[RMDB]
RNA sequence: GGGAACGACUCGAGUAGAGUCGAAAACAAAGACUUCGGUCUUUGAAAAAAACCUUUGUGCUCAAUGAUGCCACUGUAAGAUGCAUGCCCAUUGGGCAUGAACUACAUCUAAGGUGGUUGAGAGCACUCUGGUAAAAAACACUUCUUCGGAAGUGAAGUAACUAUAAAGAUUCGUCUUUAUAGUUACAAAAGAAACAACAACAACAAC
Reactivity to 2A3 in 0.01 (KOAc 150mM, MgCl2 10mM, bicine 150mM(pH8.5), 24C), signal-to-noise 4, nucleotides 027 to 156: c000a000a020a000g010a000c010u050u110c280g130g000u020c020u000u020u040g060a160a040a000a000a000a000a000c010c000u010u010u010g000u000g000c010u010c020a140a300u170g030a040u090g070c000c000a020c020u100g090u230a090a030g000a000u010g010c000a000u000g000c030c020c060a300u210u300g010g010g000c000a000u000g000a010a010c010u110a030c020a010u000c000u060a050a050g000g000u000g000g010u010u000g000a000g000a000g000c000a000c010u000c010u010g000g000u080a110a080a010a000a020a020c020a010c000u030u020c000u030u040c160g100g000a000a000g010u020g020a050a030
Reactivity to DMS in 0.01 (KOAc 150mM, MgCl2 10mM, bicine 150mM(pH8.5), 24C), signal-to-noise 2, nucleotides 027 to 156: c020a030a000a010g000a020c000u000u000c300g050g010u000c020u010u000u060g000a000a000a110a160a090a090a060c000c010u000u000u000g050u000g040c000u000c010a100a090u000g000a090u000g000c000c000a000c030u000g010u010a300a180g010a030u000g020c010a040u000g010c000c010c000a300u010u010g060g040g000c020a010u000g030a050a220c020u020a110c000a020u000c040u000a060a300g000g060u000g000g000u010u000g000a060g000a030g040c000a000c000u000c040u020g000g000u030a010a030a090a100a050a140c010a000c000u000u000c030u000u000c300g030g000a040a000g010u000g010a050a170